[RMDB]
RNA sequence: GGGAACGACUCGAGUAGAGUCGAAAACGCUUCAGGAUGACCGGAGCAGUGAACGGGUUGAGCGUGUGCUGACGGGCGUGUCAUCCCGCCUGCGUGGCGAGCUGCUGAGAAACCUGAUUAUCACCGGCAACACUUCCUGGUUCGCCAGGAAGUGUUGAAAAGAAACAACAACAACAAC
Reactivity to 2A3 in 0.01 (KOAc 150mM, MgCl2 10mM, bicine 150mM(pH8.5), 24C), signal-to-noise 4, nucleotides 027 to 126: c020g010c010u070u040c040a100g020g010a100u060g030a080c020c020g070g060a070g010c050a050g050u040g110a100a020c000g030g050g000u040u120g050a020g020c020g000u050g050u100g040c030u040g040a050c030g000g050g020c000g000u060g090u070c020a080u070c010c000c000g000c010c000u060g030c120g070u060g020g010c000g020a050g010c030u040g000c000u040g020a020g140a120a110a050c000c000u030g030a100u030u150a080u080c040a030c070c000g030g000
Reactivity to DMS in 0.01 (KOAc 150mM, MgCl2 10mM, bicine 150mM(pH8.5), 24C), signal-to-noise 3, nucleotides 027 to 126: c110g000c060u010u000c020a100g000g000a080u030g020a140c020c050g000g010a120g010c020a080g000u000g010a090a120c020g010g000g000u010u000g000a110g000c010g010u010g000u020g020c020u020g010a100c000g000g000g020c020g060u000g020u000c040a050u000c050c020c020g000c020c000u010g010c110g000u000g030g010c010g010a150g010c060u030g020c000u030g000a190g000a130a100a080c030c010u000g010a140u030u010a120u010c070a060c050c020g020g000

The record gives the reactivity of an RNA of 177 nucleotides to 2A3 and DMS.
The 2A3 profile rests on 3,127 reads.
Conditions: 150 mM KOAc, 10 mM MgCl2 and 150 mM bicine (pH 8.5), 24 C.